[RMDB]
RNA sequence: GGGAACGACUCGAGUAGAGUCGAAAAGAUAUGGAAAAUUAUCGGUUGCUGACUAUUCGAUAAGCUUAUGUCGGAAACGACAUGAAGCUUUUGACGAAUUCUCAGCAACCGAUAAUUUUCCUAAGUCCUAUUCGAGGUAGUUCGCUACCUCGAAUAGAAAAGAAACAACAACAACAAC
Reactivity to DMS in 0.01 (KOAc 150mM, MgCl2 10mM, bicine 150mM(pH8.5), 24C), signal-to-noise 1, nucleotides 027 to 126: g000a110u020a300u010g000g000a020a000a020a010u000u000a010u000c000g010g000u000u000g020c010u000g020a000c080u000a020u010u010c000g020a240u010a040a000g000c000u010u000a020u000g030u000c000g000g000a160a100a300c000g000a000c000a010u000g010a000a030g020c000u000u000u010u000g000a230c130g000a030a010u000u000c090u000c000a010g010c000a010a000c000c000g000a000u000a000a000u000u000u000u000c000c000u010a010a130g010u000c020